The data come from the RNA Mapping Database (RMDB), library OK3TST.
Chemical mapping of a 207-nucleotide RNA with 2A3.
For 2A3, 614 sequencing reads were counted.
Conditions: 150 mM KOAc, 10 mM MgCl2 and 150 mM bicine (pH 8.5), 24 C.
High 2A3 reactivity points to a flexible backbone, as in loops and unpaired stretches.
[RMDB]
RNA sequence: GGGAACGACUCGAGUAGAGUCGAAAAGAAAGAAGGCGUAAUCGCCGUGUACGAGCUCCACGAUCAAUGAUUUUCUCGCCGGCCGGCAUUGAUCGGACGUACCUCGGAUUGCCGCCUUACAAAGUUAAUACUAGAUUAAAUAAACCGUGCCGGUAAACACUGAGCAUGAGUUCGCUCAUGCUCAGUGAAAAGAAACAACAACAACAAC
Reactivity to 2A3 in 0.01 (KOAc 150mM, MgCl2 10mM, bicine 150mM(pH8.5), 24C), signal-to-noise 1, nucleotides 027 to 156: g100a010a150a010g110a000a000g020g000c030g010u050a000a070u070c080g000c100c020g070u000g000u000a000c000g000a030g010c070u060c100c080a180c030g000a000u000c000a030a020u000g050a040u040u160u170u070c120u050c060g000c000c000g000g000c000c000g000g000c000a000u000u000g000a000u000c010g000g020a010c020g020u010a000c000c010u040c010g000g000a030u020u110g030c050c030g000c000c000u000u010a070c070a030a110a000g050u120u160a090a060u090a220c030u060a030g140a140u210u120a060a230a060u180a030a080a000c040c010g010u050g000c000c000g030g010u000a000a000a000